Overview
Source: RMDB library OK3TST, as collected in RNAgym. The record gives the reactivity of an RNA of 207 nucleotides to DMS and 2A3. For 2A3, 2,787 sequencing reads were counted. For 2A3 the reverse transcriptase was SuperScript II with manganese. DMS adducts were read by reverse transcription with MarathonRT.
RNA sequence: GGGAACGACUCGAGUAGAGUCGAAAACAUCUCAUUAGGCUUGGUGCUCUACUUCUGAUGGCUGGGAGCACUUGGUGACCUCCAGCCCAACUACUCACAGCCAUUGUGACAACUAGUAUAAGAAUGAUUUGAUGAAGGCGAGGAGAAUGUCAUAAUAUCUCGUGUAUAAAUUCGUUUAUACACGAGAAAAAGAAACAACAACAACAAC
Reactivity to DMS in 0.01 (KOAc 150mM, MgCl2 10mM, bicine 150mM(pH8.5), 24C), signal-to-noise 3, nucleotides 027 to 156: c040a110u010c020u010c030a270u000u000a060g030g010c020u000u000g030g020u010g010c030u000c030u000a060c030u010u000c020u020g000a070u000g010g010c030u000g010g010g020a050g010c010a010c110u010u000g020g010u000g010a130c020c030u010c040c070a190g000c060c010c030a050a030c040u000a040c010u000c030a070c000a070g010c030c030a060u000u010g000u010g000a130c080a070a090c050u010a060g030u000a120u000a090a120g010a060a120u000g020a130u000u010u010g030a090u010g030a060a030g030g020c020g010a090g000g020a100g020a090a150u000g020u010c010a070u000a070a090u010a190
Reactivity to 2A3 in 0.01 (KOAc 150mM, MgCl2 10mM, bicine 150mM(pH8.5), 24C), signal-to-noise 4, nucleotides 027 to 156: c010a060u050c010u010c040a100u100u130a030g020g000c010u020u040g020g020u050g020c000u020c020u060a100c030u030u040c010u090g050a030u040g010g000c010u020g040g000g000a020g020c030a040c050u020u060g020g000u080g050a180c010c020u040c020c040a040g010c000c000c000a030a040c030u090a040c010u000c020a030c000a000g030c020c020a040u030u050g070u050g020a020c030a090a040c130u060a030g090u070a160u050a170a080g080a090a050u070g040a060u050u070u080g090a090u060g040a060a010g030g020c020g000a030g020g020a020g040a060a080u040g020u030c040a030u050a210a050u060a120